[RMDB]
RNA sequence: GGGAACGACUCGAGUAGAGUCGAAAAGGCAGCGCGCAGACAGACGGACCGACGGACUCCGCCGCGUCCACCUGUCUGCCCGGCCCGGCACUGCGCGCACGGGCACGGCCGAGCGCGGAGCAGCCGUGAAAGACUUACUGUUCGCAGUAAGUCUUUCAAAAGAAACAACAACAACAAC
Reactivity to 2A3 in 0.01 (KOAc 150mM, MgCl2 10mM, bicine 150mM(pH8.5), 24C), signal-to-noise 2, nucleotides 027 to 126: g010g010c030a060g090c050g020c020g010c060a010g010a020c000a000g030a010c070g020g010a000c000c020g010a010c030g000g120a200c080u020c110c010g010c000c010g050c070g010u010c010c000a000c000c010u010g010u000c000u010g010c000c000c020g000g000c000c000c020g010g010c020a020c030u170g060c080g000c010g030c010a020c030g050g020g070c240a100c230g100g000c060c030g000a020g000c020g000c000g000g010a020g000c040a020g020c010c000g020u000
Reactivity to DMS in 0.01 (KOAc 150mM, MgCl2 10mM, bicine 150mM(pH8.5), 24C), signal-to-noise 1, nucleotides 027 to 126: g030g000c030a110g030c230g000c260g000c000a020g000a030c000a030g000a070c060g010g000a000c010c030g030a020c010g020g010a170c100u000c040c000g030c020c000g000c120g000u000c000c000a060c020c000u000g010u000c000u000g010c010c020c010g000g010c000c030c000g000g020c030a280c020u000g010c010g000c000g000c020a060c040g000g000g020c110a050c180g000g000c010c040g000a070g030c040g000c010g010g000a040g010c090a140g020c000c000g000u020